[RMDB]
RNA sequence: GGGAACGACUCGAGUAGAGUCGAAAAGCUUCAUCAUCUGAGAAGAGCCCAGCAGAUUCACAAGGUUCAGCUUCCCCAGAUGAAUCUACUGAAGAACCAUCCCAGGAUCACACUCCACAGGACCUUACUACUGGUCCUGGUUCGCCAGGACCAGUAGAAAAGAAACAACAACAACAAC
Reactivity to DMS in 0.01 (KOAc 150mM, MgCl2 10mM, bicine 150mM(pH8.5), 24C), signal-to-noise 1, nucleotides 027 to 126: g040c030u010u000c030a140u000c030a080u010c070u020g010a070g030a080a110g010a120g000c040c040c100a120g040c080a030g000a080u000u020c050a120c130a200a070g020g000u000u010c000a060g030c120u000u000c010c000c000c060a080g010a050u000g010a050a040u000c050u000a060c120u000g000a070a050g020a090a070c090c040a090u020c030c010c000a120g040g010a120u010c030a060c080a050c050u010c020c080a110c090a070g000g020a050c040c010u000u010a130

Conditions: 150 mM KOAc, 10 mM MgCl2 and 150 mM bicine (pH 8.5), 24 C. This 177-nucleotide RNA was probed chemically with DMS. For DMS, 752 sequencing reads were counted.